[RMDB]
RNA sequence: GGGAACGACUCGAGUAGAGUCGAAAACGGGUCACAUUCAGCCUGAGACGUGAUGCGUAGCCGAUUGAGGCGAAUUCAGUGAUCCUAUGCUGCCGAGAAAAGCCUCUAGCGAGCUUUCACACGGCCCUGUAUUCAUGGGGUUCGCCCCAUGAAUACAAAAAGAAACAACAACAACAAC
Reactivity to 2A3 in 0.01 (KOAc 150mM, MgCl2 10mM, bicine 150mM(pH8.5), 24C), signal-to-noise 6, nucleotides 027 to 126: c040g000g000g000u010c000a010c000a020u030u020c020a030g000c010c000u100g010a070g030a070c040g050u110g040a150u200g120c100g090u090a050g040c020c010g170a190u020u130g130a010g000g000c020g000a000a000u120u110c040a040g000u000g030a020u030c000c010u020a050u150g060c050u060g000c010c010g020a020g030a040a060a030a010g020c050c020u100c060u080a090g070c070g100a020g010c030u020u010u020c050a060c020a010c010g010g000c000c000c010
Reactivity to DMS in 0.01 (KOAc 150mM, MgCl2 10mM, bicine 150mM(pH8.5), 24C), signal-to-noise 3, nucleotides 027 to 126: c170g010g010g020u000c000a020c020a080u030u000c020a070g010c010c010u000g010a100g000a240c180g020u000g020a130u010g000c180g010u010a210g000c050c000g030a150u000u000g000a050g000g000c000g000a050a040u000u030c140a080g020u000g010a000u010c010c000u000a070u010g020c120u010g000c010c000g000a110g000a120a030a020a040g000c080c040u010c020u000a150g020c220g000a070g000c020u000u000u000c060a130c120a170c030g000g000c000c060c020

Structure probing data (2A3 and DMS) for a 177-nucleotide construct. The RNA was probed in 150 mM KOAc, 10 mM MgCl2 and 150 mM bicine (pH 8.5) at 24 C. 2A3 adducts were read by reverse transcription with SuperScript II with manganese. DMS adducts were read by reverse transcription with MarathonRT.